[RMDB]
RNA sequence: GGGAACGACUCGAGUAGAGUCGAAAAGAAGAGAAUACGGUGUAAGAACAGCCCAACUUACACGGUGCGGCAUAACGGAAACACUGAUGUCGAAAAUUGGGCUGUUCGUGAAUGAACGAAAGAAGAAGAUAGCGGUGAUCUUCGGAUCACCGCUAUCAAAAGAAACAACAACAACAAC
Reactivity to 2A3 in 0.01 (KOAc 150mM, MgCl2 10mM, bicine 150mM(pH8.5), 24C), signal-to-noise 1, nucleotides 027 to 126: g160a000a000g050a000g030a080a000u140a080c090g060g000u140g020u010a020a000g000a000a010c000a000g000c050c000c000a000a000c000u000u050a000c040a000c030g000g020u010g050c030g010g050c100a100u120a140a080c050g030g150a120a030a000c000a000c030u080g030a140u010g030u090c090g050a000a000a000a110u000u030g000g000g000c010u000g000u010u000c000g000u020g000a050a150u070g000a000a000c120g000a040a150a000g200a020a000g090a000a000
Reactivity to DMS in 0.01 (KOAc 150mM, MgCl2 10mM, bicine 150mM(pH8.5), 24C), signal-to-noise 1, nucleotides 027 to 126: g000a150a030g000a020g020a010a070u020a070c120g000g000u010g000u020a090a120g000a040a070c000a020g000c000c000c050a060a020c070u010u000a050c070a000c000g020g000u000g000c060g030g000c000a170u000a070a190c120g000g000a110a300a100c000a010c000u030g000a150u000g000u030c160g000a070a000a060a080u020u000g000g000g130c000u000g000u000u000c000g030u000g170a080a050u040g000a020a200c060g000a030a030a070g040a110a020g110a120a080